Overview
This 177-nucleotide RNA was probed chemically with 2A3 and DMS. The reactions ran in a buffer of 150 mM KOAc, 10 mM MgCl2 and 150 mM bicine (pH 8.5), at 24 C. The data come from the RNA Mapping Database (RMDB), library OK2TRN. 2A3 adducts were read by reverse transcription with SuperScript II with manganese.
RNA sequence: GGGAACGACUCGAGUAGAGUCGAAAAUAUACUGCGCCAGAGCGCUGGCCGGCGCUGGCCGAUCGCGCCGUACGAGUACGCGCGGAUCUGGCCGAUCAGCGCCAGAGGCGCGAUCAGGUACUCUGCGCCAGGUGGUAGAAUUCGUUCUACCACCUGGAAAAGAAACAACAACAACAAC
Reactivity to 2A3 in 0.01 (KOAc 150mM, MgCl2 10mM, bicine 150mM(pH8.5), 24C), signal-to-noise 2, nucleotides 027 to 126: u090a020u050a090c130u130g000c010g000c040c020a030g010a050g070c000g010c110u030g050g110c020c020g050g000c060g000c120u120g040g000c030c020g000a050u040c050g000c010g030c140c060g080u040a010c120g050a080g090u030a020c020g030c000g010c010g030g000a040u050c070u110g110g030c000c010g000a050u060c050a000g020c010g030c030c000a050g090a120g080g040c010g000c010g010a040u040c040a000g050g070u040a110c050u060c010u100g060c030g000
Reactivity to DMS in 0.01 (KOAc 150mM, MgCl2 10mM, bicine 150mM(pH8.5), 24C), signal-to-noise 3, nucleotides 027 to 126: u010a110u000a110c130u010g020c050g000c010c030a110g010a160g010c030g020c010u000g000g000c100c050g000g000c010g020c070u010g010g010c030c030g000a010u000c020g000c000g030c050c040g010u000a090c110g010a190g020u000a040c060g010c040g000c010g020g000a040u000c000u020g040g010c060c030g010a010u000c150a060g010c020g010c000c050a060g010a300g010g000c010g020c020g010a060u000c060a070g010g000u000a050c110u000c020u000g020c220g000